The record gives the reactivity of an RNA of 177 nucleotides to 2A3. The RNA was probed in 150 mM KOAc, 10 mM MgCl2 and 150 mM bicine (pH 8.5) at 24 C. The 2A3 profile rests on 360 reads. The data come from the RNA Mapping Database (RMDB), library OK1LIB.
RNA sequence: GGGAACGACUCGAGUAGAGUCGAAAACUCCGCCGCGUUGCCGCCGGCCGACACGACAGGCGGAACAAUCGUGAGCCGGACGGUCGUCUUCGUGAGACCGUCGCUGCGGGCGAGCGUGAACUGGAUCGGCAUGACGCCCAUUCGUGGGCGUCAUGCCAAAAGAAACAACAACAACAAC
Reactivity to 2A3 in 0.01 (KOAc 150mM, MgCl2 10mM, bicine 150mM(pH8.5), 24C), signal-to-noise 1, nucleotides 027 to 126: c030u010c000c000g000c010c010g050c040g000u030u180g020c000c000g110c000c000g000g080c000c040g160a060c000a000c070g120a080c020a070g000g120c000g000g000a000a030c050a050a000u220c000g030u080g090a000g000c000c120g120g000a000c020g000g000u000c020g120u000c030u000u140c300g070u200g180a070g000a000c000c000g010u020c000g020c000u200g000c010g100g030g000c050g000a000g000c020g010u010g000a000a000c090u080g000g000a110u200c080